[RMDB]
RNA sequence: GGGAACGACUCGAGUAGAGUCGAAAAGAUAUGGAUUCACAUAGUCCCACAUCGGAAACGAUGUGUGGACAAUAAUUGUGAUCCUAAGUCAAAGCGAUGAAGAUAGCUUCGGCUAUCUUCAUCGCAAGCUGAAAUGUUAGUUCGCUAACAUUUCAGCAAAAGAAACAACAACAACAAC
Reactivity to 2A3 in 0.01 (KOAc 150mM, MgCl2 10mM, bicine 150mM(pH8.5), 24C), signal-to-noise 4, nucleotides 027 to 126: g050a000u090a030u160g030g010a040u290u260c010a010c000a000u020a010g010u000c000c010c000a010c000a000u000c000g030g050a080a040a060c030g000a010u000g030u010g080u230g010g000a010c000a000a010u030a000a010u050u030g000u010g000a000u000c010c000u020a210a030g040u050c070a120a050a040g020c000g000a000u000g000a000a000g000a010u010a010g000c020u060u120c300g030g000c010u000a010u000c010u010u000c000a000u000c000g000c000a000a000
Reactivity to DMS in 0.01 (KOAc 150mM, MgCl2 10mM, bicine 150mM(pH8.5), 24C), signal-to-noise 3, nucleotides 027 to 126: g000a060u000a300u000g000g010a010u000u000c000a000c000a030u000a080g000u000c000c000c000a000c010a000u000c000g010g010a140a080a200c010g010a000u000g010u000g000u030g050g000a010c010a070a040u010a060a090u000u000g040u010g000a030u000c010c000u020a060a140g000u010c030a050a130a120g000c010g000a010u000g000a010a000g010a010u000a000g010c010u000u000c180g030g020c000u000a000u000c000u000u000c010a010u000c000g010c000a000a010

Structure probing data (2A3 and DMS) for a 177-nucleotide construct. The data come from the RNA Mapping Database (RMDB), library TTRDEL. For DMS, 3,745 sequencing reads were counted. Reactivities are given for positions 27 through 126. Conditions: 150 mM KOAc, 10 mM MgCl2 and 150 mM bicine (pH 8.5), 24 C. High DMS reactivity at an A or C suggests that its Watson-Crick edge is free.